[RMDB]
RNA sequence: GGGAACGACUCGAGUAGAGUCGAAAAGGAACGUUGUUCGCAACGUUCCGUGCCGGAAACGGACAUGACGAUCGCGCGCAUGUCGGGAAACCGUAAACCCGAGCAUCAUGGUGUUCGCACCAUGAAAAUCCUGGUCAUCAUUCGUGAUGACCAGGAUAAAAGAAACAACAACAACAAC
Reactivity to DMS in 0.01 (KOAc 150mM, MgCl2 10mM, bicine 150mM(pH8.5), 24C), signal-to-noise 3, nucleotides 027 to 126: g000g000a010a000c000g000u000u010g000u000u020c250g010c010a010a000c020g020u000u000c000c000g010u000g010c130c010g010g010a060a070a280c030g000g020a020c020a040u000g010a070c000g000a100u020c230g010c150g000c070g000c040a030u010g000u020c000g010g000g000a110a100a230c000c030g010u010a040a110a170c010c010c000g000a180g000c180a180u020c010a010u000g010g010u000g010u000u000c290g020c020a000c000c000a000u000g000a010a030a120
Reactivity to 2A3 in 0.01 (KOAc 150mM, MgCl2 10mM, bicine 150mM(pH8.5), 24C), signal-to-noise 2, nucleotides 027 to 126: g010g010a000a000c010g000u000u020g020u060u120c210g000c080a000a000c000g000u000u000c000c000g000u030g000c060c010g040g000a120a130a020c040g080g000a010c030a050u040g060a100c000g040a090u220c100g000c020g000c030g000c250a020u030g020u010c000g010g010g010a130a110a030c000c030g010u090a050a050a060c000c000c000g040a050g040c050a100u030c000a010u000g020g000u010g070u010u030c130g060c090a000c000c000a000u000g000a050a020a000
Structure probing data (DMS and 2A3) for a 177-nucleotide construct. For 2A3 the reverse transcriptase was SuperScript II with manganese.